[RMDB]
RNA sequence: GGGAACGACUCGAGUAGAGUCGAAAAUGCCUUUCUGAGUGUGGGUUUCAAGACCCUCCUGAUACAGACAGGAAACAGGGAAAUAUCGGGUAGAAGAGGGCGGUUCCCCUGCAAAUGCGUCACCCUCAAAUCCCUGGGUAUUCGUACCCAGGGAUUUAAAAGAAACAACAACAACAAC
Reactivity to 2A3 in 0.01 (KOAc 150mM, MgCl2 10mM, bicine 150mM(pH8.5), 24C), signal-to-noise 4, nucleotides 027 to 126: u170g100c030c000u030u270u100c000u030g060a090g050u300g030u080g070g050g000u020u070u150c140a040a020g070a040c000c030c000u030c000c000u020g000a060u030a180c040a020g110a010c020a030g010g120a020a110a020c020a040g080g050g090a020a100a010u190a070u110c040g050g020g020u090a010g040a050a000g030a090g000g000g010c030g020g000u010u050c000c000c000c000u020g070c000a120a200a120u120g030c000g040u050c030a080c020c010c000u020c020
Reactivity to DMS in 0.01 (KOAc 150mM, MgCl2 10mM, bicine 150mM(pH8.5), 24C), signal-to-noise 4, nucleotides 027 to 126: u030g000c020c010u010u000u010c010u000g000a220g060u040g000u010g000g000g000u000u000u010c210a140a070g000a070c010c000c020u020c000c000u020g020a180u020a130c090a030g040a230c060a080g010g000a070a040a090c180a050g000g000g010a130a150a090u020a070u000c070g000g020g000u020a110g000a140a160g040a060g000g000g000c080g000g010u000u000c010c030c020c050u020g020c030a030a090a080u030g000c100g010u000c030a100c000c000c010u010c060